Notes
The data come from the RNA Mapping Database (RMDB), library RFMREP. The record gives the reactivity of an RNA of 177 nucleotides to DMS and 2A3. For 2A3 the reverse transcriptase was SuperScript II with manganese. DMS adducts were read by reverse transcription with MarathonRT. High 2A3 reactivity points to a flexible backbone, as in loops and unpaired stretches. The reactions ran in a buffer of 150 mM KOAc, 10 mM MgCl2 and 150 mM bicine (pH 8.5), at 24 C. The DMS profile rests on 755 reads.
RNA sequence: GGGAACGACUCGAGUAGAGUCGAAAAGGAAAUGGACAACCACAAUAUGCAUAAAUCUAACUCCUACCAUCAGCUACACACUGCUUGACAUAUAUUGUUAGAAGCACCUCGCAUUUGUGGGUUCUCUCCUCAUGUAAGUGUUCGCACUUACAUGAGGAAAAGAAACAACAACAACAAC
Reactivity to DMS in 0.01 (KOAc 150mM, MgCl2 10mM, bicine 150mM(pH8.5), 24C), signal-to-noise 2, nucleotides 027 to 126: g030g030a030a090a170u000g000g060a000c120a090a230c000c000a020c020a000a040u010a020u000g010c010a150u000a020a140a080u000c040u000a030a020c030u000c040c090u020a160c170c050a130u010c040a030g020c020u010a100c150a140c250a100c090u000g000c050u000u010g010a000c090a070u010a080u020a120u020u020g000u000u000a030g000a040a020g000c080a100c160c130u000c170g020c050a000u000u000u000g020u000g010g030g010u000u000c050u000c090u000
Reactivity to 2A3 in 0.01 (KOAc 150mM, MgCl2 10mM, bicine 150mM(pH8.5), 24C), signal-to-noise 3, nucleotides 027 to 126: g080g020a040a020a080u160g070g020a000c040a100a050c080c000a000c010a000a060u110a010u240g000c020a040u090a120a090a040u040c020u020a000a030c030u030c050c060u080a060c020c010a020u010c020a000g040c020u120a040c170a030c010a030c120u060g020c010u080u130g020a010c080a010u180a000u020a040u130u110g020u030u010a030g020a060a000g040c060a030c030c040u100c080g000c000a030u020u020u030g000u020g000g060g000u010u020c020u030c000u010